[RMDB]
RNA sequence: GGGAACGACUCGAGUAGAGUCGAAAAGGCCUAAUGCCUUAUGCUAUGCAUUUUUUGCCGAAAGUGUUUCCUGCUAUAUCAAUUAGAGGAAAGUGGGCAGUUGGGUUAAGCUUAUUCUGUUUUCUCCACAUACGACAUUGUUCGCAAUGUCGUAUGUAAAAGAAACAACAACAACAAC
Reactivity to DMS in 0.01 (KOAc 150mM, MgCl2 10mM, bicine 150mM(pH8.5), 24C), signal-to-noise 4, nucleotides 027 to 126: g000g010c010c030u000a060a110u000g000c000c010u010u000a050u010g010c050u000a100u000g020c000a000u010u000u010u000u000u000g030c090c230g010a070a080a050g010u000g010u000u000u000c000c010u010g000c020u000a020u000a300u000c190a090a100u000u000a020g010a080g010g010a020a070a050g020u000g000g000g010c000a020g020u000u000g010g010g010u000u000a070a090g000c130u010u010a100u000u000c120u010g000u000u000u000u000c010u000c080c300
Reactivity to 2A3 in 0.01 (KOAc 150mM, MgCl2 10mM, bicine 150mM(pH8.5), 24C), signal-to-noise 3, nucleotides 027 to 126: g030g000c010c020u010a050a000u050g030c000c010u120u120a070u200g010c000u040a050u170g000c030a040u040u010u050u100u210u150g030c040c020g140a150a040a020g010u030g050u030u020u040c000c020u050g190c000u030a020u010a030u150c060a100a240u100u020a010g000a000g010g030a040a000a010g050u120g000g000g000c010a030g100u050u110g030g020g000u000u060a040a010g000c040u050u130a090u270u040c030u030g090u050u030u010u020c020u000c000c010
An RNA of 177 nucleotides, treated with DMS and 2A3 and read out base by base.
It was measured as part of the RMDB library RFMREP.
Conditions: 150 mM KOAc, 10 mM MgCl2 and 150 mM bicine (pH 8.5), 24 C.
High 2A3 reactivity points to a flexible backbone, as in loops and unpaired stretches.